[RMDB]
RNA sequence: GGGAACGACUCGAGUAGAGUCGAAAAGCGCCCCUUUUCGAAGGGGCGCACUGGAAAUAAAGCCGAAAGGCUAGGCAUUCCUUAUUUGGCGAAAGCCUGCGACUAUUGAGAUCUUCGGAUCUCAAAACGGUAUACGUUAGUUCGCUAACGUAUACCGAAAAGAAACAACAACAACAAC
Reactivity to DMS in 0.01 (KOAc 150mM, MgCl2 10mM, bicine 150mM(pH8.5), 24C), signal-to-noise 3, nucleotides 027 to 126: g000c000g010c000c000c000c000u020u000u000u000c160g010a040a020g020g010g000g020c000g010c000a000c030u000g000g000a050a060a060u000a080a130a080g000c000c010g000a150a060a150g020g000c000u000a030g010g010c180a150u000u000c000c000u000u010a080u000u020u000g000g010c040g010a070a060a150g000c000c000u000g020c130g000a070c090u010a150u000u000g000a000g000a000u000c000u000u010c170g020g020a020u000c000u000c000a020a010a040a160
Reactivity to 2A3 in 0.01 (KOAc 150mM, MgCl2 10mM, bicine 150mM(pH8.5), 24C), signal-to-noise 3, nucleotides 027 to 126: g010c000g010c010c000c000c000u020u050u020u060c200g100a020a000g010g000g000g010c000g010c000a000c010u020g030g080a020a040a060u160a100a160a000g010c010c010g040a070a030a010g000g000c000u000a030g050g000c030a070u010u060c010c000u090u130a280u160u190u100g030g000c020g030a070a010a000g000c010c000u020g030c060g060a080c040u090a160u120u060g000a020g000a000u000c000u040u090c240g090g000a000u000c000u010c000a010a000a010a000